[RMDB]
RNA sequence: GGGAACGACUCGAGUAGAGUCGAAAAGCCUCUCCUUGUCGGUGAAGUCUCCCCUGGAAGGCCUCUUCCUAGGUCCGGAGUCUACCUCCAUCUGGUCCGUUCGGGCCCUCUUCGCCGGGGGAGCCCCCUCUCCAUCCUUAUCCUUCUUUCCAAGAAUCUACGUUAUACGGUUCGCCGUAUAACGUAGAAAAGAAACAACAACAACAAC
Reactivity to 2A3 in 0.01 (KOAc 150mM, MgCl2 10mM, bicine 150mM(pH8.5), 24C), signal-to-noise 2, nucleotides 027 to 156: g020c010c020u020c010u010c010c000u050u060g060u080c040g000g070u130g090a100a060g090u010c030u030c000c030c000c000u000g000g030a070a010g050g010c010c050u080c010u120u040c020c080u060a030g000g010u010c030c030g020g020a010g010u020c110u140a120c010c020u080c040c030a190u110c130u110g000g000u000c040c010g060u090u200c070g000g000g000c040c000c010u050c060u120u130c040g020c030c000g010g000g000g000g000a000g000c030c000c000c000c000u000c010u010c000c010a100u030c000c030u030u090a060u120c000c000u010u070c020u010u100u020c050c050a080a040g080a070a100u050
Structure probing data (2A3) for a 207-nucleotide construct. Values cover nucleotides 27 to 156. Source: RMDB library VIROID, as collected in RNAgym. Conditions: 150 mM KOAc, 10 mM MgCl2 and 150 mM bicine (pH 8.5), 24 C.